RNA sequence: GGGAACGACUCGAGUAGAGUCGAAAACAACCCAACUCCUACUCAAUACGUCCUCGUCGUACAGAACGGUAACAUGUUUUCCGAACAUCCGCGCUUGGGUAUACGAGUAUACACCUUACCCAACCCGCCAACCACCUAAAGUUCGCUUUAGGUGGAAGUGCUAUAAAGUGUUCGCACUUUAUAGCACAAAAGAAACAACAACAACAAC
Reactivity to DMS in 0.01 (KOAc 150mM, MgCl2 10mM, bicine 150mM(pH8.5), 24C), signal-to-noise 2, nucleotides 027 to 156: c070a100a300c020c010c000a090a090c080u000c030c010u040a100c020u000c020a080a140u000a070c020g000u000c000c000u000c020g000u010c040g020u000a110c070a060g000a090a120c040g000g020u000a060a100c110a110u000g040u010u000u030u000c000c000g010a100a170c030a100u000c060c040g040c040g030c060u000u010g010g010g040u010a050u000a050c060g000a110g040u000a190u000a080c080a100c030c000u000u010a050c020c000c020a060a040c040c020c000g000c000c010a080a210c000c010a000c000c000u000a000a020a010g000u000u000c290g040c000u010u000u000a000g000g000u000g000g000a020a020
Reactivity to 2A3 in 0.01 (KOAc 150mM, MgCl2 10mM, bicine 150mM(pH8.5), 24C), signal-to-noise 7, nucleotides 027 to 156: c040a010a120c010c010c010a030a050c030u050c020c020u060a090c020u040c100a060a060u050a100c040g050u050c000c010u050c020g060u020c020g010u070a070c020a100g050a130a040c010g040g010u070a060a040c050a110u130g060u060u030u070u080c030c020g020a030a020c020a080u070c040c060g030c000g010c040u020u030g030g020g000u030a030u020a050c080g000a020g070u030a030u050a060c080a050c030c020u030u030a020c000c000c010a020a030c040c020c000g040c030c030a050a060c010c000a000c000c000u010a010a000a000g020u050u080c150g050c110u000u000u000a000g010g000u000g000g000a000a010
Structure probing data (DMS and 2A3) for a 207-nucleotide construct. For 2A3, 6,822 sequencing reads were counted. It was measured as part of the RMDB library M2RFPK. High 2A3 reactivity points to a flexible backbone, as in loops and unpaired stretches. For DMS the reverse transcriptase was MarathonRT.